[RMDB]
RNA sequence: GGGAACGACUCGAGUAGAGUCGAAAACGCACUCGCAGCUUAAUAACCUGCGCUGAGCCCUUCUCCCCCAGCUUGCCUGUGUCCUAGGGAAUUGGAAGGUCAUCCUUCACAGGAUCGUGUGGUAGUCAUUACUCGUGAGUGUUCGCACUCACGAGAACCAGGGAGAAUACUUCGGUAUUCUCCCUGGAAAAGAAACAACAACAACAAC
Reactivity to DMS in 0.01 (KOAc 150mM, MgCl2 10mM, bicine 150mM(pH8.5), 24C), signal-to-noise 1, nucleotides 027 to 156: c050g000c040a140c030u000c020g000c050a040g020c030u010u000a220a120u000a260a100c270c020u000g030c000g070c050u000g000a000g020c010c000c020u000u020c080u000c040c020c070c010c070a070g010c040u000u000g030c010c020u000g000u000g030u000c040c000u020a110g000g030g050a090a140u020u000g010g010a040a010g030g020u010c120a130u000c010c040u000u010c050a230c060a020g020g030a060u000c050g040u000g030u000g000g000u000a060g010u000c020a090u000u040a130c000u000c000g030u000g000a030g010u000g010u000u040c300g030c000a030c000u000c000a000c000g000a040g010a010a060
Reactivity to 2A3 in 0.01 (KOAc 150mM, MgCl2 10mM, bicine 150mM(pH8.5), 24C), signal-to-noise 1, nucleotides 027 to 156: c020g000c050a050c000u010c060g000c010a000g010c010u020u090a040a000u040a010a090c010c000u010g040c030g010c210u060g010a060g010c020c010c030u160u080c120u020c000c000c010c010c000a000g000c000u050u050g010c020c010u080g010u000g000u110c010c030u100a060g120g020g000a090a090u110u080g050g070a050a040g020g020u080c050a050u120c000c000u020u020c000a020c000a060g070g000a070u060c040g030u090g000u030g170g030u030a000g020u060c030a130u120u120a040c000u000c000g000u000g000a000g020u000g000u040u000c090g070c040a040c000u010c000a000c000g000a000g000a000a040